[RMDB]
RNA sequence: GGGAACGACUCGAGUAGAGUCGAAAACUGGCAGCCUCUUUGGGCACCAGACAUGAAAUUCAACAGCAACCGCCAGUAGAUUAAACCAAUUGAACGUCUGAAGCUGUGGUGCCGGCACAGGAGUCUCGUUAAUUUCAGAAUUCGUUCUGAAAUUAACAAAAGAAACAACAACAACAAC
Reactivity to 2A3 in 0.01 (KOAc 150mM, MgCl2 10mM, bicine 150mM(pH8.5), 24C), signal-to-noise 9, nucleotides 027 to 126: c000u000g020g000c030a040g020c030c010u110c090u140u160u200g030g010g000c010a010c000c000a010g060a040c050a060u270g080a070a080a100u190u130c050a050a040c000a030g020c010a040a050c020c030g000c010c010a010g020u030a020g030a040u120u160a110a060a070c040c010a020a060u040u110g040a060a020c030g060u010c050u050g040a080a020g010c010u020g020u030g040g010u010g020c020c000g020g020c040a030c020a030g040g030a040g040u010c020u020c060
Reactivity to DMS in 0.01 (KOAc 150mM, MgCl2 10mM, bicine 150mM(pH8.5), 24C), signal-to-noise 9, nucleotides 027 to 126: c020u000g010g010c050a140g000c060c020u000c100u010u020u010g010g010g020c010a100c030c010a070g020a080c170a110u020g010a050a080a110u020u010c070a100a070c080a060g000c030a060a160c100c140g010c010c040a040g010u000a070g000a170u010u010a050a080a150c090c070a060a080u030u010g000a080a080c150g000u000c040u000g000a070a150g000c020u000g010u010g000g020u000g000c030c010g000g010c040a090c110a060g000g000a070g000u010c040u010c100

An RNA of 177 nucleotides, treated with 2A3 and DMS and read out base by base. DMS adducts were read by reverse transcription with MarathonRT. The reactions ran in a buffer of 150 mM KOAc, 10 mM MgCl2 and 150 mM bicine (pH 8.5), at 24 C. It was measured as part of the RMDB libraries RFM100 and RFMREP. Values cover nucleotides 27 to 126.